[RMDB]
Structure probing data (2A3) for a 177-nucleotide construct. The reactions ran in a buffer of 150 mM KOAc, 10 mM MgCl2 and 150 mM bicine (pH 8.5), at 24 C.
RNA sequence: GGGAACGACUCGAGUAGAGUCGAAAAGAGUGCGCGUGAGCAUAGUCCAAGAUGUCAUAGCUGCUCACUUGUGAUGCCGUUUUGUCCUAGGACUCGAAUGGACUUUGGGCCUGCACUUAGUCAGUCGUCCCACGGGGUCGUUCGCGACCCCGUGGGAAAAAGAAACAACAACAACAAC
Reactivity to 2A3 in 0.01 (KOAc 150mM, MgCl2 10mM, bicine 150mM(pH8.5), 24C), signal-to-noise 1, nucleotides 027 to 126: g000a010g000u030g000c140g010c000g060u130g080a020g120c020a040u100a020g000u000c010c000a060a060g030a270u180g030u040c030a040u010a080g000c000u000g000c000u000c000a000c070u040u060g000u030g060a170u120g000c040c030g040u000u000u050u100g090u130c020c020u190a240g000g080a060c000u000c190g010a130a140u070g030g000a030c070u120u000u000g120g000g060c000c000u030g060c120a000c000u060u050a000g000u060c000a000g060u000c180g000